RNA sequence: GGGAACGACUCGAGUAGAGUCGAAAAUGUAAAAAUACCAAUUAGAUUUGCAGAAGGUGCAUCUGUUACGGAUUGAUCUAAUGUUUCUUGUCUAUGGGAUCUAUCCAAAUAAUAUCGAACCACUUGUUCCAAAGUUCUAUCUGCAGCCUGGAGCUCACAACUACAGUUUGUUCGCAAACUGUAGUUGAAAAGAAACAACAACAACAAC
Reactivity to DMS in 0.01 (KOAc 150mM, MgCl2 10mM, bicine 150mM(pH8.5), 24C), signal-to-noise 2, nucleotides 027 to 156: u000g010u000a040a100a110a080a100u000a300c050c030a090a150u010u010a080g030a150u010u010u000g020c040a060g000a080a090g020g030u020g000c030a100u000c020u000g040u000u000a080c100g050g010a110u000u010g000a030u000c030u010a090a140u010g000u000u000u000c040u000u000g020u000c070u000a090u000g030g010g010a030u000c040u000a070u000c000c000a050a050a120u000a020a080u000a070u000c040g020a100a110c020c030a060c070u010u020g010u000u010c020c020a070a100a100g010u000u000c050u000a110u000c080u010g020c050a050g020c030c030u010g000g000a070g030c000u000c040a090
Reactivity to 2A3 in 0.01 (KOAc 150mM, MgCl2 10mM, bicine 150mM(pH8.5), 24C), signal-to-noise 4, nucleotides 027 to 156: u120g010u080a050a070a050a020a030u120a100c030c010a000a020u070u070a070g080a130u040u050u130g000c010a010g020a100a040g060g020u040g030c020a060u020c040u060g070u100u070a050c100g010g000a020u020u040g030a000u030c010u050a070a110u130g090u040u080u040c080u120u140g090u030c080u070a120u110g040g000g000a010u000c010u030a010u010c000c000a000a060a010u130a020a010u060a030u070c050g010a030a020c010c000a040c100u050u080g040u120u040c040c000a030a070a050g020u060u000c020u050a150u020c030u050g000c010a010g030c020c010u060g050g000a020g020c020u020c040a050